[RMDB]
RNA sequence: GGGAACGACUCGAGUAGAGUCGAAAAGCCAUCGAUACGUCGAUGGCAAAAGGCAGCUAUUUAGAAGGAACCAUCAAUGAGCAUCUGCACAGAGGCUGACAAGGGAAAUAAAACUGCCGUGUAGAAACCAUACCGUCACGUUCGCGUGACGGUAUGGAAAAGAAACAACAACAACAAC
Reactivity to 2A3 in 0.01 (KOAc 150mM, MgCl2 10mM, bicine 150mM(pH8.5), 24C), signal-to-noise 3, nucleotides 027 to 126: g020c000c000a000u000c000g010a000u000a020c260g090u000c000g030a000u020g000g000c030a000a040a010a000g000g050c020a000g000c000u150a070u140u020u060a110g080a210a040g160g040a050a080c000c000a050u100c040a020a120u120g030a000g000c000a050u000c010u090g010c020a040c000a080g030a000g030g000c000u040g010a050c030a070a170g010g030g040a030a140a060u080a000a040a020a070c010u020g000c010c020g000u060g020u030a010g050a030a090a000
Reactivity to DMS in 0.01 (KOAc 150mM, MgCl2 10mM, bicine 150mM(pH8.5), 24C), signal-to-noise 3, nucleotides 027 to 126: g030c010c000a070u000c000g010a000u000a080c200g010u010c000g000a000u000g000g040c020a000a040a070a090g000g000c000a000g000c080u010a070u020u000u030a020g010a120a090g020g010a190a110c020c010a070u030c090a180a130u030g010a060g020c010a050u010c010u010g000c280a080c210a020g000a010g010g040c010u000g000a040c090a070a180g000g010g000a060a030a100u030a000a000a030a110c000u000g000c000c040g010u000g000u010a020g000a120a050a090
Record summary: Source: RMDB library OK1LIB, as collected in RNAgym. This 177-nucleotide RNA was probed chemically with 2A3 and DMS. 2A3 adducts were read by reverse transcription with SuperScript II with manganese. The RNA was probed in 150 mM KOAc, 10 mM MgCl2 and 150 mM bicine (pH 8.5) at 24 C. Reactivities are given for positions 27 through 126. 2A3 is a SHAPE reagent: it acylates the 2'-hydroxyl of flexible nucleotides of all four kinds.